[RMDB]
RNA sequence: GGGAACGACUCGAGUAGAGUCGAAAAAGCAUGUUAGGUUCGCAUGGUGCACUAUGGUGUUAUUAGUAACUAAGUAAGCUUACAAUCGAAAAUGUUUAACCAUAAAAGGGUAAAAUGGUGUAAGACAGAUACCCUCUGAGCUUCGGCUCAGAGGGAACCUGACUGGAAAGUUCGCUUUCCAGUCAGGAAAAGAAACAACAACAACAAC
Reactivity to 2A3 in 0.01 (KOAc 150mM, MgCl2 10mM, bicine 150mM(pH8.5), 24C), signal-to-noise 1, nucleotides 027 to 156: a010g060c020a050u040g000u020u020a050g050g030u070u120c020g020c030a020u020g030g060u110g120c000a020c030u100a210u130g050g000u000g000u050u040a030u060u010a010g060u090a130a000c020u000a130a000g070u000a180a000g050c000u060u030a060c040a000a080u030c060g010a150a000a000a000u010g020u040u040u020a000a020c000c000a010u020a150a130a000a090g000g070g000u050a140a060a000a030u040g000g000u010g030u040a010a000g020a030c070a000g080a020u060a090c000c000c000u030c010u000g010a000g030c000u050u160c300g020g010c000u000c000a000g000a000g000g000g000a000a010

Background
Structure probing data (2A3) for a 207-nucleotide construct. For 2A3, 548 sequencing reads were counted. 2A3 adducts were read by reverse transcription with SuperScript II with manganese. The data come from the RNA Mapping Database (RMDB), library M2RFPK.